[RMDB]
RNA sequence: GGGAACGACUCGAGUAGAGUCGAAAAACGGUUCAGAACCACCAGACAUAGUGGCUCUCUUCUUUAGACCGCCAUAUUGCUUGGCGUUCGAUUGCAUAACCCUGCGCUCAAGAUGAUAGAUGCAUCCACCAGGCUCCUCGUUCGCGAGGAGCCUGGUAAAAGAAACAACAACAACAAC
Reactivity to 2A3 in 0.01 (KOAc 150mM, MgCl2 10mM, bicine 150mM(pH8.5), 24C), signal-to-noise 1, nucleotides 027 to 126: a000c010g080g000u020u060c040a010g000a300a120c070c100a010c000c000a100g000a110c000a000u160a020g050u000g070g000c000u000c000u040c000u180u000c000u000u050u060a060g010a000c000c040g000c000c000a010u130a220u120u300g060c220u020u100g000g030c000g000u050u000c000g100a170u080u000g050c020a000u050a040a040c100c000c040u010g000c050g000c000u060c060a170a040g050a040u300g000a000u000a020g070a070u050g010c000a000u010c000c000
This 177-nucleotide RNA was probed chemically with 2A3. The reactions ran in a buffer of 150 mM KOAc, 10 mM MgCl2 and 150 mM bicine (pH 8.5), at 24 C. Values are in units of 0.01, from 0 to 300, in steps of 10. The 2A3 profile rests on 287 reads.